[RMDB]
RNA sequence: GGGAACGACUCGAGUAGAGUCGAAAAUUGAAGUCCCACCGCAAGUGGUGAAACUUCCGUCUGCACCUCAGACUAUCCAGCCCGAGGUAAAAGAAGUUGCACCUGUCUAUGAGGCUGAUACCGAACAGAGCGCCGUCGUUCGCGACGGCGAAAAGAAACAACAACAACAAC
Reactivity to 2A3 in 0.01 (KOAc 150mM, MgCl2 10mM, bicine 150mM(pH8.5), 24C), signal-to-noise 3, nucleotides 027 to 129: u090u090g050a000a040g070u070c000c000c000a000c000c040g040c040a110a110g050u040g100g000u050g020a010a030a020c000u000u000c020c000g020u010c030u060g030c030a040c020c000u050c000a020g040a060c010u030a110u080c010c080a020g030c020c040c010g020a030g000g000u020a050a040a000a000g020a000a000g000u000u030g010c000a010c000c000u010g000u050c030u040a150u110g060a090g020g010c000u020g040a070u050a110c020c040g040a070a040c020a070g030a000g120
Reactivity to DMS in 0.01 (KOAc 150mM, MgCl2 10mM, bicine 150mM(pH8.5), 24C), signal-to-noise 2, nucleotides 027 to 129: u020u070g010a030a120g010u020c000c060c010a000c100c150g010c120a000a000g020u070g080g040u020g010a080a060a000c000u000u010c000c040g010u000c000u050g040c300a050c010c050u010c010a000g050a040c000u000a240u040c180c080a070g000c010c040c110g020a070g000g010u000a060a000a110a090g020a000a010g040u020u040g120c020a030c020c030u000g040u020c030u040a100u110g060a150g020g010c010u090g040a180u040a090c130c000g030a150a030c150a060g050a060g080
The data come from the RNA Mapping Database (RMDB), library 15KLIB. An RNA of 170 nucleotides, treated with 2A3 and DMS and read out base by base. The DMS profile rests on 5,656 reads. The 2A3 profile rests on 5,530 reads. The reactions ran in a buffer of 150 mM KOAc, 10 mM MgCl2 and 150 mM bicine (pH 8.5), at 24 C.